[RMDB]
Structure probing data (2A3) for a 207-nucleotide construct. The reactions ran in a buffer of 150 mM KOAc, 10 mM MgCl2 and 150 mM bicine (pH 8.5), at 24 C.
RNA sequence: GGGAACGACUCGAGUAGAGUCGAAAACGGUUACGCCUUCUUUACCGGUAUCAAGGAAGGUACUCGGCCAUGCUAAGGGAAGCAUUAUUCCUUAGGCGCAUGUCGCCGCCAGCAUGGUGUGAGGGGAAAAAGUAUGCUGGGUUCGCCCAGCAUACAACCGAAGGGAUAUCUUCGGAUAUCCCUUCGGAAAAGAAACAACAACAACAAC
Reactivity to 2A3 in 0.01 (KOAc 150mM, MgCl2 10mM, bicine 150mM(pH8.5), 24C), signal-to-noise 2, nucleotides 027 to 156: c010g000g040u050u010a000c090g000c020c000u000u000c000u000u030u020a030c030c010g190g090u120a070u220c140a020a030g010g000a020a000g000g000u020a030c010u030c020g060g020c020c000a000u000g050c000u040a060a070g000g000g060a050a000g010c090a240u080u160a160u100u250c000c000u000u080a050g020g000c000g010c060a120u240g030u300c020g000c040c020g020c020c080a000g000c000a000u020g000g050u070g200u100g020a030g000g050g010g020a000a060a020a000a060g000u010a000u000g000c000u000g000g000g040u040u110c120g090c070c020c040a000g000c000a000u000a000c000a000a020